[RMDB]
Structure probing data (2A3 and DMS) for a 207-nucleotide construct. Reactivities are given for positions 27 through 156. For DMS, 5,955 sequencing reads were counted. The reactions ran in a buffer of 150 mM KOAc, 10 mM MgCl2 and 150 mM bicine (pH 8.5), at 24 C. The 2A3 profile rests on 3,821 reads. Source: RMDB library M2RFPK, as collected in RNAgym. For DMS the reverse transcriptase was MarathonRT.

RNA sequence: GGGAACGACUCGAGUAGAGUCGAAAAUUACUCUUGUUAGGUGAAAGUUGAUGGUCGCCGAGCCAGUCUGUACAUCCAAAAAGGACUCUAUGUAGUAGGAAGUCGAGAGCCUAUGAGAGUUAGAGUCAUGCCUAUUUUGUGUUCGCACAAAAUAGAACCAAUUCUAUAUCUUCGGAUAUAGAAUUGGAAAAGAAACAACAACAACAAC
Reactivity to 2A3 in 0.01 (KOAc 150mM, MgCl2 10mM, bicine 150mM(pH8.5), 24C), signal-to-noise 4, nucleotides 027 to 156: u090u030a030c010u010c000u040u050g050u050u090a050g000g010u030g050a100a110a100g050u070u060g060a100u090g070g040u050c040g010c090c010g000a000g020c020c010a030g060u020c020u030g020u050a030c010a070u060c040c030a030a060a010a030a090g090g010a010c000u000c010u030a030u100g040u010a030g000u010a000g040g030a090a040g030u100c110g020a020g010a010g190c000c000u010a020u040g040a050g000a000g090u020u030a010g000a000g030u020c020a020u090g030c000c000u000a000u000u000u000u010g020u010g000u010u030c170g040c090a000c000a000a000a000a000u000a000g010a000a030
Reactivity to DMS in 0.01 (KOAc 150mM, MgCl2 10mM, bicine 150mM(pH8.5), 24C), signal-to-noise 3, nucleotides 027 to 156: u000u000a050c030u000c030u010u000g010u000u010a060g020g030u000g010a080a060a110g030u000u000g000a100u010g030g010u000c030g040c060c040g000a180g020c030c020a090g020u000c030u000g000u010a090c050a110u000c050c090a040a050a100a130a110g020g000a030c000u000c030u000a060u010g020u000a230g000u000a030g010g000a050a100g010u000c110g020a190g020a200g020c000c010u000a030u000g000a170g020a120g020u000u010a030g010a090g000u000c030a060u000g000c070c000u000a020u000u000u000u000g020u000g020u010u000c270g030c030a030c010a010a000a000a010u000a010g010a040a140